[RMDB]
Structure probing data (2A3 and DMS) for a 177-nucleotide construct. Source: RMDB library M2PK50, as collected in RNAgym. The RNA was probed in 150 mM KOAc, 10 mM MgCl2 and 150 mM bicine (pH 8.5) at 24 C. For DMS the reverse transcriptase was MarathonRT. 2A3 adducts were read by reverse transcription with SuperScript II with manganese. The DMS profile rests on 3,996 reads. For 2A3, 24,097 sequencing reads were counted.
RNA sequence: GGGAACGACUCGAGUAGAGUCGAAAACACACUCCCUUCGGGGAGUGUGAAAGAACGCGUGGGACACGCAAGGAGGAGCGUGUGCGACGCGACAAACCCAAAAAAGUGGAUAGUUCGCUAUCCACAACGGAUAAUGAUACUUCGGUAUCAUUAUCCGAAAAGAAACAACAACAACAAC
Reactivity to 2A3 in 0.01 (KOAc 150mM, MgCl2 10mM, bicine 150mM(pH8.5), 24C), signal-to-noise 4, nucleotides 027 to 126: c010a000c000a000c000u010c000c010c020u000u050c190g040g000g000g000a000g010u000g000u010g000a000a000a000g050a110a020c010g010c010g000u030g040g030g080a000c000a000c010g010c060a050a050g140g060a070g040g040a100g030c010g000u010g000u050g070c030g080a000c010g000c000g000a000c010a020a040a020c000c000c000a080a090a020a020a010a010g000u000g000g000a010u000a010g020u040u060c220g000c120u000a000u010c000c000a000c000a000a010
Reactivity to DMS in 0.01 (KOAc 150mM, MgCl2 10mM, bicine 150mM(pH8.5), 24C), signal-to-noise 4, nucleotides 027 to 126: c010a010c010a000c010u000c000c010c000u010u030c200g030g020g010g000a000g030u000g030u000g010a020a040a100g000a120a100c000g010c000g030u000g020g010g010a010c000a000c000g020c000a070a040g020g010a300g020g010a160g010c000g020u000g020u010g000c010g010a010c010g010c000g020a030c080a080a080a110c000c000c010a000a050a050a040a110a080g010u000g000g010a020u000a000g010u010u010c250g020c000u000a000u000c000c000a000c010a060a080